RNA sequence: GGGAACGACUCGAGUAGAGUCGAAAAACAGCAUAACUAACAACUGUUUUCGUCCUUAAACCAACGAUAACAGCUGUUAGGCCAUGUUUUGUAACGGCUGUUAGGAGCGCUGUUAAGGAGUGUUAACGUGAUAUACCCGGUUCGCCGGGUAUAUCACAAAAGAAACAACAACAACAAC
Reactivity to 2A3 in 0.01 (KOAc 150mM, MgCl2 10mM, bicine 150mM(pH8.5), 24C), signal-to-noise 1, nucleotides 027 to 126: a020c030a000g030c010a050u030a110a150c000u010a000a000c020a000a000c000u000g010u010u000u020u040c010g020u050c040c000u070u090a130a160a010c060c000a010a020c000g000a000u000a030a010c000a000g000c000u000g010u020u010a030g010g000c010c000a110u080g060u000u070u080u120g080u070a020a050c040g010g000c050u120g050u070u040a030g010g120a070g000c000g010c050u030g050u070u010a040a040g080g000a120g010u060g050u140u070a090a010c090
Reactivity to DMS in 0.01 (KOAc 150mM, MgCl2 10mM, bicine 150mM(pH8.5), 24C), signal-to-noise 2, nucleotides 027 to 126: a030c020a060g020c020a060u000a080a200c050u010a030a040c020a010a050c010u000g000u000u000u020u000c030g010u000c080c050u000u000a050a070a100c280c300a040a010c020g000a030u000a000a000c000a020g000c000u010g010u000u010a030g000g000c090c130a050u000g000u030u000u020u000g000u000a050a020c080g010g000c000u010g040u000u000a040g020g010a140g010c100g040c030u010g020u000u000a090a040g010g010a120g000u000g000u010u020a090a110c160
This 177-nucleotide RNA was probed chemically with 2A3 and DMS.
Source: RMDB library RFMREP, as collected in RNAgym.
2A3 adducts were read by reverse transcription with SuperScript II with manganese.
The reactions ran in a buffer of 150 mM KOAc, 10 mM MgCl2 and 150 mM bicine (pH 8.5), at 24 C.